[RMDB]
RNA sequence: GGGAACGACUCGAGUAGAGUCGAAAAACUGCAUCUACGGAUGCAGAACUACGUUCAUCCUAUUUAUUUGGACGCAUGAAAUGAGAAUAGGGAACGGGAUUCUCAUACGCAGGCUACGGCCUGCGAAAAAACUCCUUAUGCUUCGGCAUAAGGAGAACUAUUCAUCAAUGUUCGCAUUGAUGAAUAGAAAAGAAACAACAACAACAAC
Reactivity to DMS in 0.01 (KOAc 150mM, MgCl2 10mM, bicine 150mM(pH8.5), 24C), signal-to-noise 2, nucleotides 027 to 156: a150c000u000g010c010a000u010c000u000a110c300g100g020a020u000g010c000a010g010a070a120c010u000a030c020g000u000u000c000a070u020c130c050u000a080u000u020u010a140u000u000u000g000g020a090c070g050c070a060u000g010a100a090a110u000g000a140g000a020a080u000a030g040g020g000a080a060c090g010g020g000a300u000u010c000u000c010a120u000a160c030g030c000a020g010g000c010u010a130c290g000g010c000c010u000g070c000g020a000a030a030a050a020a010c020u000c000c000u000u000a000u000g000c000u000u010c290g080g020c020a000u010a000a010g010g000a000g010a000a040
Reactivity to 2A3 in 0.01 (KOAc 150mM, MgCl2 10mM, bicine 150mM(pH8.5), 24C), signal-to-noise 5, nucleotides 027 to 156: a000c010u000g000c000a010u000c000u040a040c220g120g000a000u000g010c000a000g000a010a000c020u100a040c010g000u000u010c010a120u130c020c010u010a020u020u060u030a140u040u080u080g140g030a080c090g070c170a090u170g120a080a060a050u140g020a100g040a070a010u010a000g000g010g010a010a000c000g000g000g020a020u040u000c010u000c020a050u100a110c030g000c010a000g020g010c010u030a090c260g100g000c000c000u010g000c000g000a020a000a000a000a000a010c000u000c000c000u000u000a000u000g000c000u010u050c140g120g000c000a000u000a000a000g000g000a000g000a000a000